This 177-nucleotide RNA was probed chemically with 2A3 and DMS. It was measured as part of the RMDB library OK1LIB. The reactions ran in a buffer of 150 mM KOAc, 10 mM MgCl2 and 150 mM bicine (pH 8.5), at 24 C. For 2A3 the reverse transcriptase was SuperScript II with manganese. The 2A3 profile rests on 527 reads.
[RMDB]
RNA sequence: GGGAACGACUCGAGUAGAGUCGAAAAUAGCAGUGAUUGCAAAUAUGAAGUUACAAAGUUUAAGUUCAUGCGGAGAUAUUGCUGUGAGUGUAUAUAGUGGAUGGUUAGCGUAUAGUACUUUUGAUCAUCUCUUCGUAUCCUUCGGGAUACGAAGAGAAAAAGAAACAACAACAACAAC
Reactivity to 2A3 in 0.01 (KOAc 150mM, MgCl2 10mM, bicine 150mM(pH8.5), 24C), signal-to-noise 2, nucleotides 027 to 126: u120a020g000c020a000g000u010g080a050u290u210g000c080a000a070a000u300a090u060g020a000a010g210u050u050a060c050a090a090a000g070u140u150u100a060a000g030u010u050c010a020u140g000c000g070g000a070g000a070u040a140u040u030g050c000u000g010u060g110a040g060u100g040u020a000u020a040u020a180g090u050g030g220a140u060g040g000u000u000a010g000c070g030u070a060u040a190g150u100a110c050u100u050u030u120g130a080u060c090a050
Reactivity to DMS in 0.01 (KOAc 150mM, MgCl2 10mM, bicine 150mM(pH8.5), 24C), signal-to-noise 2, nucleotides 027 to 126: u020a100g000c060a030g000u000g000a050u020u030g000c080a140a090a190u080a070u080g000a040a070g030u000u010a050c130a040a110a110g000u020u030u010a030a070g000u000u000c050a060u000g050c060g000g010a070g010a050u000a030u010u000g000c020u000g010u000g000a160g000u000g000u060a030u000a070u000a120g020u000g030g030a040u010g000g010u010u030a030g000c140g000u000a030u000a100g000u030a020c070u000u020u050u010g040a060u010c300a060